[RMDB]
RNA sequence: GGGAACGACUCGAGUAGAGUCGAAAAACUCAAGGCCAAAGAACACACUGAAAAAAUACCAACAGUCAGGCAAGUGACAGGGUUUCUCUGCAUAGCCCUGGCUGUUCUGGAACUUGCUUCGUAGACCAGGCUGGCCUCAAAUCCAGAGAUCUGCCUACGAGCCAUAAAUAUUCGUAUUUAUGGCUCGAAAAGAAACAACAACAACAAC
Reactivity to 2A3 in 0.01 (KOAc 150mM, MgCl2 10mM, bicine 150mM(pH8.5), 24C), signal-to-noise 4, nucleotides 027 to 156: a000c060u040c080a020a050g030g000c010c020a080a130a050g080a190a000c080a020c040a030c150u180g130a080a060a000a000a020a070u180a080c000c000a000a010c000a000g000u000c000a000g010g010c030a140a300g030u010g070a190c000a000g030g050g010u050u260u130c040u020c000u000g000c020a020u020a060g020c050c010c000u000g000g000c000u000g010u040u010c020u040g000g010a020a020c020u070u080g040c010u050u050c040g060u060a020g040a060c040c000a010g000g030c030u010g010g010c000c010u030c010a080a110a030u050c030c020a030g010a000g000a080u020c010u080g030c030c000u040a050
Reactivity to DMS in 0.01 (KOAc 150mM, MgCl2 10mM, bicine 150mM(pH8.5), 24C), signal-to-noise 1, nucleotides 027 to 156: a140c050u000c050a100a100g020g020c040c040a040a120a140g000a140a070c050a040c040a150c070u020g000a000a040a040a120a050a090u020a100c040c000a030a050c010a050g000u010c020a000g000g050c110a120a220g020u000g000a080c000a020g040g010g000u000u010u000c030u000c010u000g020c020a070u000a190g000c230c010c030u000g020g020c010u000g000u000u010c040u030g020g010a050a080c040u000u010g000c010u020u000c020g020u000a080g000a060c010c040a020g030g020c050u010g070g040c040c050u000c070a080a040a140u000c100c010a180g020a170g020a100u010c010u000g020c020c000u000a200

The record gives the reactivity of an RNA of 207 nucleotides to 2A3 and DMS. For 2A3 the reverse transcriptase was SuperScript II with manganese. The reactions ran in a buffer of 150 mM KOAc, 10 mM MgCl2 and 150 mM bicine (pH 8.5), at 24 C.